[RMDB]
Structure probing data (2A3 and DMS) for a 177-nucleotide construct.
High DMS reactivity at an A or C suggests that its Watson-Crick edge is free.
Values are in units of 0.01, from 0 to 300, in steps of 10.
Source: RMDB library OK2TST, as collected in RNAgym.
Conditions: 150 mM KOAc, 10 mM MgCl2 and 150 mM bicine (pH 8.5), 24 C.

RNA sequence: GGGAACGACUCGAGUAGAGUCGAAAAUCAGAGCAACGACCUUUCUGCUACGAGCCUUACACAGCAGUUGGGAGGCCUGGACAGUAUCAUAUCGAGUGCUAGUGCAAGUCUGCUUACAACGAACAGACGUGAGUAUCAGGUUCGCCUGAUACUCACGAAAAGAAACAACAACAACAAC
Reactivity to 2A3 in 0.01 (KOAc 150mM, MgCl2 10mM, bicine 150mM(pH8.5), 24C), signal-to-noise 2, nucleotides 027 to 126: u060c020a000g030a010g090c020a030a090c020g100a110c010c000u040u080u050c020u020g010c000u050a060c050g050a070g050c010c020u060u070a060c090a010c000a030g030c020a020g020u050u010g050g000g000a020g030g000c000c000u010g000g030a020c010a020g060u060a020u130c040a070u050a030u170c070g030a040g060u090g030c020u070a030g020u040g050c030a050a050g060u000c020u020g040c020u050u030a070c020a130a030c060g060a040a000c020a010g080a070
Reactivity to DMS in 0.01 (KOAc 150mM, MgCl2 10mM, bicine 150mM(pH8.5), 24C), signal-to-noise 4, nucleotides 027 to 126: u000c040a100g010a030g030c030a070a080c120g000a140c050c030u000u000u000c010u000g000c030u000a120c160g000a120g030c040c050u010u010a090c120a080c080a110g020c060a080g020u020u000g030g000g020a080g010g000c000c020u010g010g010a050c060a040g000u000a060u000c090a100u010a090u000c080g010a080g030u000g000c050u000a050g020u000g030c060a050a100g000u000c010u010g010c050u020u010a090c060a070a080c120g010a030a070c110a040g010a110